[RMDB]
RNA sequence: GGGAACGACUCGAGUAGAGUCGAAAAGGGACUGGCCCGAUGAAGACCGGCAACCUAACUUUAUUUAAGCGUAAAGUGAAGGUGCUAAUUCCAGCAAAAUGGUGUAUUCCGUUUUGGUAGAUAAGAGAAGCGUGACAUGAGUUCGCUCAUGUCACAAUCAAUUGCACUUCUUCGGAAGUGCAAUUGAAAAAGAAACAACAACAACAAC
Reactivity to 2A3 in 0.01 (KOAc 150mM, MgCl2 10mM, bicine 150mM(pH8.5), 24C), signal-to-noise 3, nucleotides 027 to 156: g000g010g000a050c050u060g030g030c010c020c050g010a040u110g060a050a030g060a030c060c030g000g000c040a090a110c010c000u020a030a020c020u010u000u030a080u070u130u110a130a040g160c030g030u010a000a000a010g000u010g080a150a010g000g000u000g000c010u000a020a030u090u030c010c000a000g020c030a060a000a010a040u030g050g000u080g040u170a070u190u050c010c020g000u010u000u010u010g060g030u130a070g040a130u140a140a090g070a010g070a140a050g130c080g040u000g000a000c000a000u000g000a000g020u030u100c230g030c070u010c000a000u000g000u000c000a000c000a000a000
Reactivity to DMS in 0.01 (KOAc 150mM, MgCl2 10mM, bicine 150mM(pH8.5), 24C), signal-to-noise 2, nucleotides 027 to 156: g030g010g010a070c020u000g000g010c000c020c030g000a140u000g010a200a020g030a010c000c020g010g020c020a070a050c000c000u000a110a020c000u000u000u000a000u010u000u000a110a150g040c300g040u000a020a040a050g020u000g000a070a060g000g020u000g000c010u000a070a160u000u000c000c000a030g020c010a030a020a010a010u000g030g030u010g000u010a130u000u000c000c000g040u000u000u010u000g020g010u010a030g000a040u020a150a140g010a150g010a100a140g040c060g020u020g000a030c000a020u000g000a020g000u000u000c300g030c000u000c000a000u000g000u000c000a010c000a040a090
Chemical mapping of a 207-nucleotide RNA with 2A3 and DMS.